[RMDB]
RNA sequence: GGGAACGACUCGAGUAGAGUCGAAAAUUCGAGCGGAGCCGCAGUUGUCGUAGGGCUGAAUCUCGAAGUGACGGUCUGUUUAGCACUCCUUCUUGGCUAGAUAAAUUUCGUCGGCAGCCAGUGGCCCCGUAAUGACUCACUUCGGUGAGUCAUUACGAAAAGAAACAACAACAACAAC
Reactivity to DMS in 0.01 (KOAc 150mM, MgCl2 10mM, bicine 150mM(pH8.5), 24C), signal-to-noise 3, nucleotides 027 to 126: u000u020c040g030a070g010c110g020g010a050g020c010c000g000c100a120g030u000u010g000u000c040g000u020a090g000g000g000c000u010g000a090a090u030c040u000c060g010a110a080g000u020g000a130c050g000g010u010c040u000g000u000u010u010a080g000c040a070c110u020c050c040u030u040c080u020u010g010g010c020u000a040g000a040u010a020a090a080u010u010u000c050g000u000c010g030g000c040a060g000c010c030a070g020u010g000g020c000c000c000
Reactivity to 2A3 in 0.01 (KOAc 150mM, MgCl2 10mM, bicine 150mM(pH8.5), 24C), signal-to-noise 6, nucleotides 027 to 126: u080u030c040g010a030g020c030g010g060a010g000c000c000g020c030a040g020u050u050g020u040c040g060u110a090g000g030g060c010u020g040a060a100u020c030u010c070g090a150a050g030u100g090a040c020g010g010u010c010u040g060u080u070u060a020g000c030a020c110u080c030c020u130u070c040u100u160g070g000c000u020a030g030a070u100a100a210a110u120u130u110c080g050u010c010g040g030c020a010g000c000c020a030g000u010g040g000c000c020c000
Chemical mapping of a 177-nucleotide RNA with DMS and 2A3. DMS adducts were read by reverse transcription with MarathonRT. The reactions ran in a buffer of 150 mM KOAc, 10 mM MgCl2 and 150 mM bicine (pH 8.5), at 24 C. The 2A3 profile rests on 4,567 reads. High 2A3 reactivity points to a flexible backbone, as in loops and unpaired stretches.